RNA sequence: GGGAACGACUCGAGUAGAGUCGAAAAAGCUGGAGCUACGGCUCCAGCAAAGCUUCAACAUCCCCGUAGGUCGGGCGCAGUACGCGCAGUGGAUCUACUGAAGCCAGCUAUACGUACGCGUAUAGCAAGUAGACGUUUCUUUCGAGAAACGUCUACUAAAAGAAACAACAACAACAAC
Reactivity to 2A3 in 0.01 (KOAc 150mM, MgCl2 10mM, bicine 150mM(pH8.5), 24C), signal-to-noise 3, nucleotides 027 to 126: a010g020c020u010g000g020a020g000c010u070a070c260g120g000c000u000c000c000a010g030c000a000a000a000g000c000u000u000c010a040a060c000a190u150c020c000c000c000g000u000a000g000g030u000c040g020g030g030c000g000c020a050g170u300a110c110g030c000g000c010a040g150u100g300g020a010u000c000u000a010c040u020g000a010a010g010c020c010a010g010c010u000a000u000a000c000g010u000a010c300g000c000g090u000a000u000a000g010c000a020
Reactivity to DMS in 0.01 (KOAc 150mM, MgCl2 10mM, bicine 150mM(pH8.5), 24C), signal-to-noise 2, nucleotides 027 to 126: a060g000c000u000g000g000a060g000c000u000a030c230g070g010c000u000c060c020a020g000c000a020a000a090g000c030u000u000c000a140a260c230a190u080c000c020c030c300g000u000a000g000g000u000c000g000g000g000c000g000c000a260g000u000a090c150g000c010g000c020a020g000u000g030g050a000u000c000u000a000c000u000g020a020a000g020c050c300a090g010c030u000a020u010a010c000g010u020a040c220g000c020g040u000a000u010a000g000c000a100